[RMDB]
RNA sequence: GGGAACGACUCGAGUAGAGUCGAAAAGGGGUCGCAAGGGAGCAUCGACGACGUAAAGGGAGCUCUGAAGCCUCCACGGAGCAUCGAUCUUUACAUCAGAUGCGAAGAACUUGCGACGGAGGCACCCAAAACUCCUCGAACUUCGGUUCGAGGAGAAUCAACAUUUACGCUUCGGCGUAAAUGUUGAAAAAGAAACAACAACAACAAC
Reactivity to 2A3 in 0.01 (KOAc 150mM, MgCl2 10mM, bicine 150mM(pH8.5), 24C), signal-to-noise 1, nucleotides 027 to 156: g100g010g020g010u000c000g010c010a000a000g020g010g000a000g000c000a000u000c000g280a300c030g000a000c000g060u000a010a000a010g010g010g010a010g000c000u000c000u010g000a050a020g020c000c000u010c000c000a010c020g000g010a000g060c000a010u300c020g000a000u000c000u030u010u010a020c010a050u110c010a010g000a010u000g000c000g090a090a010g000a000a000c000u000u000g000c000g010a000c000g020g000a000g000g000c010a040c000c000c000a030a070a090a090c000u000c000c010u010c000g000a010a010c000u020u130c300g030g000u010u010c000g010a000g010g010a000g010a000a050